[RMDB]
RNA sequence: GGGAACGACUCGAGUAGAGUCGAAAACAACCAGCAGCGCGUCGAGGUGUUCAAGGCCAAGCUGGACGCCGUACAGUCGAGCGUCGAGGUCUACAAGGCGCUGAUGCAGGGGGCAUCCGUGCGCGCCGAAUAGUUCGGUGUUCGCACCGAACUAUUCAAAAGAAACAACAACAACAAC
Reactivity to 2A3 in 0.01 (KOAc 150mM, MgCl2 10mM, bicine 150mM(pH8.5), 24C), signal-to-noise 5, nucleotides 027 to 126: c020a010a090c010c010a030g090c060a020g010c010g000c000g030u040c010g030a130g020g020u030g030u060u050c050a060a040g050g000c020c010a040a020g020c020u070g060g010a010c000g000c020c000g050u140a160c060a110g100u070c030g060a040g090c000g000u000c020g070a050g040g070u060c040u090a120c050a100a110g040g000c050g000c120u050g020a040u150g000c060a070g050g000g020g010g000c000a000u000c000c020g030u080g010c000g000c010g000c010c000
Reactivity to DMS in 0.01 (KOAc 150mM, MgCl2 10mM, bicine 150mM(pH8.5), 24C), signal-to-noise 5, nucleotides 027 to 126: c120a120a200c040c040a120g030c160a100g010c010g010c010g030u000c030g000a130g010g010u000g000u000u000c050a060a060g010g000c020c050a110a130g000c050u000g010g030a030c040g010c040c040g010u010a080c260a120g000u010c040g000a090g020c020g000u000c020g000a150g000g000u010c050u000a100c130a070a170g010g000c010g020c030u000g020a060u000g010c050a110g000g000g000g010g010c020a020u000c000c070g010u000g000c010g010c030g010c010c100